The data come from the RNA Mapping Database (RMDB), library OK1LIB. The record gives the reactivity of an RNA of 177 nucleotides to DMS and 2A3. The 2A3 profile rests on 4,794 reads.
RNA sequence: GGGAACGACUCGAGUAGAGUCGAAAACGCCACCGCGGCCGCUGCGGUGUUGGCCGCAGUGAUCGUCGAACCAAUUUUCGCCAAAUCCGUUGCCGCCGUGGUCAGCAUCUCCGGCGUCGCGAUUACGAAAAUGAAACCUGUUCGCAGGUUUCAUUUUAAAAGAAACAACAACAACAAC
Reactivity to DMS in 0.01 (KOAc 150mM, MgCl2 10mM, bicine 150mM(pH8.5), 24C), signal-to-noise 4, nucleotides 027 to 126: c080g000c080c040a060c040c100g010c010g000g000c040c060g010c000u000g000c180g000g000u000g010u030u030g010g020c000c020g010c020a020g000u000g000a060u020c050g010u000c030g000a090a140c090c090a100a080u030u000u010u010c040g010c050c060a050a100a050u030c060c050g040u000u010g020c090c040g020c020c060g020u020g000g010u010c060a090g020c110a100u020c020u010c060c010g010g030c030g000u000c040g000c030g000a050u010u010a080c110g000
Reactivity to 2A3 in 0.01 (KOAc 150mM, MgCl2 10mM, bicine 150mM(pH8.5), 24C), signal-to-noise 5, nucleotides 027 to 126: c040g040c030c020a060c040c000g000c000g020g000c000c020g000c010u030g010c020g010g020u030g040u060u110g060g020c000c000g000c000a010g000u020g040a100u080c070g080u050c030g040a080a070c030c020a080a080u080u020u060u100c080g030c030c030a080a070a050u030c050c030g070u080u130g020c010c010g000c000c020g020u030g020g030u040c030a030g020c010a080u040c020u010c030c010g010g000c010g020u030c020g000c030g040a040u050u110a110c090g070